[RMDB]
RNA sequence: GGGAACGACUCGAGUAGAGUCGAAAAUCCUCUACCGGACGUUUUCGAACGUCCGGUAGAGGAGUAGUAUGGUUAACCCGCAGACGAUCGAAAGGGAUGUGGAUGAAAGCCUAAGCCGCCGCCUUUAUGGGAAAAUUUUCGAAUUUUCCCAUAAAGGGGGCACCAAUAGAUUCGUCUAUUGGUGCCCAAAAGAAACAACAACAACAAC
Reactivity to 2A3 in 0.01 (KOAc 150mM, MgCl2 10mM, bicine 150mM(pH8.5), 24C), signal-to-noise 1, nucleotides 027 to 156: u000c000c000u020c000u020a000c010c000g000g000a000c000g030u010u030u120u230c260g140a070a000c010g000u000c000c040g000g000u000a000g000a000g000g010a000g000u000a000g020u000a010u120g040g000u020u060a050a100c030c000c020g030c010a010g030a050c080g090a120u190c060g110a200a060a100g050g030g020a030u260g000u020g010g060a030u020g070a100a030a060g000c010c010u030a060a000g020c010c020g060c040c020g070c060c000u000u000u000a000u000g000g000g000a000a000a000a000u030u040u050u100c060g020a050a000u000u000u000u000c030c000c000a000u000a000a010a000g000g000